[RMDB]
RNA sequence: GGGAACGACUCGAGUAGAGUCGAAAAUACUCAAAACUACAAAAUGUUGGUAAGAUACAUUAAAUAAGACCUAAAUAAAUGGGGAGAAGUAUCUGUUCAUGGAUUGGAAUGUACAAUAUUGCUAAUGUAUUCAUUCUUCCCAAACUGAUCCACAGUACGAUUUCACUGUAUUCGUACAGUGAAAUCGAAAAGAAACAACAACAACAAC
Reactivity to DMS in 0.01 (KOAc 150mM, MgCl2 10mM, bicine 150mM(pH8.5), 24C), signal-to-noise 2, nucleotides 027 to 156: u010a030c050u000c000a080a080a120a100c070u000a240c030a100a120a120a080u000g000u020u000g010g020u000a080a080g000a040u010a050c000a170u000u000a020a090a070u010a150a110g020a120c020c010u020a080a080a150u020a030a120a170u010g020g010g000g040a170g010a080a100g010u000a000u000c050u010g010u000u000c070a070u010g020g020a120u000u000g000g020a100a090u000g000u010a050c030a040a100u000a070u010u010g000c080u010a030a050u000g020u000a030u010u010c020a190u000u000c100u000u000c000c010c010a030a100a110c070u000g000a080u020c030c040a050c060a060g030u010a090
Reactivity to 2A3 in 0.01 (KOAc 150mM, MgCl2 10mM, bicine 150mM(pH8.5), 24C), signal-to-noise 4, nucleotides 027 to 156: u070a000c030u030c130a060a090a120a080c120u260a080c080a080a120a090a150u100g010u040u020g060g040u110a070a020g010a030u060a030c030a060u120u240a140a170a030u150a140a040g080a090c010c010u060a060a110a110u160a100a110a080u210g020g010g020g010a060g040a100a020g010u010a010u010c040u030g020u000u090c030a080u060g020g020a080u120u050g050g060a080a010u080g030u040a010c030a060a050u070a060u190u160g100c050u140a090a040u120g030u050a070u060u090c030a020u020u030c000u010u010c000c000c000a070a020a010c040u030g020a010u070c030c000a030c040a070g040u120a030
Chemical mapping of a 207-nucleotide RNA with DMS and 2A3. 2A3 is a SHAPE reagent: it acylates the 2'-hydroxyl of flexible nucleotides of all four kinds. For DMS, 2,373 sequencing reads were counted. The reactions ran in a buffer of 150 mM KOAc, 10 mM MgCl2 and 150 mM bicine (pH 8.5), at 24 C. The data come from the RNA Mapping Database (RMDB), library OK3TST.